[RMDB]
RNA sequence: GGGAACGACUCGAGUAGAGUCGAAAAGCGUGACGGCGGGUAUGCCCUGGAAAUGGAUGCGCCGCUGUCCAUCCCCGGCCUCGGCACGAUCACCCCUGAGCAACUCCGGUCGCGCAGCGCCGCGACCCUCGAAAUGCAGGCCGAGCGGAUCGACGAAAAUACAUAGUCAUUUCGAUGACUAUGUAUUAAAAGAAACAACAACAACAAC
Reactivity to DMS in 0.01 (KOAc 150mM, MgCl2 10mM, bicine 150mM(pH8.5), 24C), signal-to-noise 2, nucleotides 027 to 156: g010c010g010u000g000a020c030g000g030c020g020g020g040u000a040u020g010c010c010c010u000g020g010a090a210a180u000g010g030a060u000g020c060g010c030c010g040c030u010g010u000c010c040a120u000c020c010c000c020g010g020c040c010u010c050g000g000c010a060c040g010a180u010c040a160c020c000c020c050u000g010a100g010c080a100a090c090u000c030c060g010g010u000c100g030c030g000c050a180g020c140g020c020c010g060c010g020a030c010c010c020u000c020g020a080a150a110u000g000c040a110g010g010c020c000g000a090g000c040g020g000a100u000c010g000a210c050g000a160a100
Reactivity to 2A3 in 0.01 (KOAc 150mM, MgCl2 10mM, bicine 150mM(pH8.5), 24C), signal-to-noise 4, nucleotides 027 to 156: g070c040g130u220g000a000c010g010g010c010g000g020g010u090a070u250g170c020c000c030u100g150g170a140a130a090u140g000g020a040u070g000c170g190c040c000g000c000u010g000u000c010c000a060u030c020c000c000c000g030g010c010c010u030c030g010g000c050a020c250g060a060u160c100a190c020c040c020c070u060g050a030g040c010a010a080c050u050c070c020g000g010u010c000g000c000g000c040a120g160c040g050c130c000g000c000g010a000c000c000c000u060c010g030a050a020a020u110g000c010a020g040g000c000c000g000a010g010c030g020g020a060u090c020g100a100c030g010a190a040
The record gives the reactivity of an RNA of 207 nucleotides to DMS and 2A3. The data come from the RNA Mapping Database (RMDB), library OK3TST. For 2A3, 3,003 sequencing reads were counted. The RNA was probed in 150 mM KOAc, 10 mM MgCl2 and 150 mM bicine (pH 8.5) at 24 C.